[RMDB]
RNA sequence: GGGAACGACUCGAGUAGAGUCGAAAACGUCGCGUGUUCGCACGCGACGAAACGAGAUACGGCAAAUAAGCCGAUCCCAGGCGAUCGUACGCCAUACUCAAAAAAGUCCCUGCUUCGGCAGGGACAACAAUUAAUCAUCCUUCGGGAUGAUUAAUUGAAAAGAAACAACAACAACAAC
Reactivity to DMS in 0.01 (KOAc 150mM, MgCl2 10mM, bicine 150mM(pH8.5), 24C), signal-to-noise 5, nucleotides 027 to 126: c020g010u010c010g050c020g030u000g010u000u030c190g020c010a020c000g020c000g020a000c010g010a010a050a070c140g010a070g010a120u010a060c020g010g010c000a080a100a130u010a090a120g010c020c000g010a070u000c000c010c010a270g010g010c000g000a080u000c210g010u010a180c060g000c000c010a100u000a050c030u020c030a000a100a040a070a120a100g000u000c000c000c000u000g000c000u000u000c160g010g030c000a000g000g000g000a000c010a010a020
Reactivity to 2A3 in 0.01 (KOAc 150mM, MgCl2 10mM, bicine 150mM(pH8.5), 24C), signal-to-noise 6, nucleotides 027 to 126: c010g020u000c000g000c010g010u020g020u050u060c200g000c090a000c010g010c000g010a010c000g000a010a010a000c060g020a000g010a070u120a130c000g000g010c020a060a140a300u200a300a060g000c010c010g000a020u020c020c010c000a020g010g000c020g030a080u140c120g110u130a070c030g010c000c010a040u070a060c030u030c030a070a090a040a050a040a020g000u010c000c000c010u000g010c000u030u060c190g090g000c020a000g000g000g000a000c000a000a000